Description
Conditions: 150 mM KOAc, 10 mM MgCl2 and 150 mM bicine (pH 8.5), 24 C. Chemical mapping of a 207-nucleotide RNA with 2A3. Values cover nucleotides 27 to 156. Source: RMDB library OK3TST, as collected in RNAgym.
RNA sequence: GGGAACGACUCGAGUAGAGUCGAAAAAACAAUACUCUCGCGUCCACAUGGCAGCCCGGGGACCCCGAGUGGUACACCGUCUCUGUCCCUGGUGCUGACGGCUCCCUCCGCACGGUGAACAACACUUUCAUUUUUGAGCACAUGUGCGAGACCGCCACGUGUCCUUUUUGUUCGCAAAAAGGACACGAAAAGAAACAACAACAACAAC
Reactivity to 2A3 in 0.01 (KOAc 150mM, MgCl2 10mM, bicine 150mM(pH8.5), 24C), signal-to-noise 2, nucleotides 027 to 156: a000a010c140a040a020u130a100c070u020c000u040c140g040c040g030u000c020c010a040c050a190u110g170g000c020a010g000c000c010c000g000g000g000g010a000c080c060c060c180g020a030g070u010g080g080u170a080c170a120c060c030g150u120c000u020c020u060g000u000c000c000c000u010g040g050u210g000c000u000g030a010c010g040g000c010u040c020c000c000u040c060c000g000c000a070c020g000g010u010g040a020a050c040a080a080c080a040c090u100u300u170c140a260u060u150u000u030u050g000a050g070c020a040c040a150u090g010u010g040c000g010a030g000a020c000c040g010c010c030a060